RNA sequence: GGGAACGACUCGAGUAGAGUCGAAAAAAAUUCACAUGGGAUAGCAAUCAGUAAAGCCUGCCUUUGGGCGUUACAGAGUGCGAAUGACAAAACAAAGGAUACGUACGUAGAAACUGCAGUGGAAUAUUUUCGGACGCGGGUUCGACUCCCGCCGCCUAGUAAAUGUAAUCUUCGGAUUACAUUUACUAAAAGAAACAACAACAACAAC
Reactivity to 2A3 in 0.01 (KOAc 150mM, MgCl2 10mM, bicine 150mM(pH8.5), 24C), signal-to-noise 2, nucleotides 027 to 156: a000a000a010u120u040c040a050c030a080u080g050g000g020a020u060a030g010c020a060a050u060c020a040g020u020a020a020a000g000c000c000u010g000c010c000u020u010u000g000g000g000c010g000u010u020a010c010a020g050a010g080u070g060c030g080a070a070u120g080a050c050a030a020a010a000c000a000a020a000g000g010a010u020a040c070g010u000a000c010g010u040a050g090a110a050a030c060u090g000c020a020g050u020g050g080a140a040u040a150u130u130u070u130c050g020g010a030c000g000c000g020g000g000u040u100c020g000a020c030u020c010c000c000g000c000c000g010c000c010u010
Reactivity to DMS in 0.01 (KOAc 150mM, MgCl2 10mM, bicine 150mM(pH8.5), 24C), signal-to-noise 1, nucleotides 027 to 156: a000a020a050u000u000c000a010c000a120u000g010g010g030a160u000a080g010c000a050a150u000c010a150g040u010a010a080a010g000c000c010u010g040c080c060u010u010u000g020g010g000c010g010u010u000a050c000a130g000a090g040u000g040c010g000a090a070u010g010a170c050a070a060a040a050c090a050a030a100g000g010a070u010a080c120g060u010a060c060g040u010a110g000a080a030a060c090u000g040c000a090g000u000g030g020a090a080u000a050u000u000u000u010c010g010g030a060c060g070c040g040g010g030u010u000c090g030a300c100u000c000c010c000g030c000c050g020c000c030u000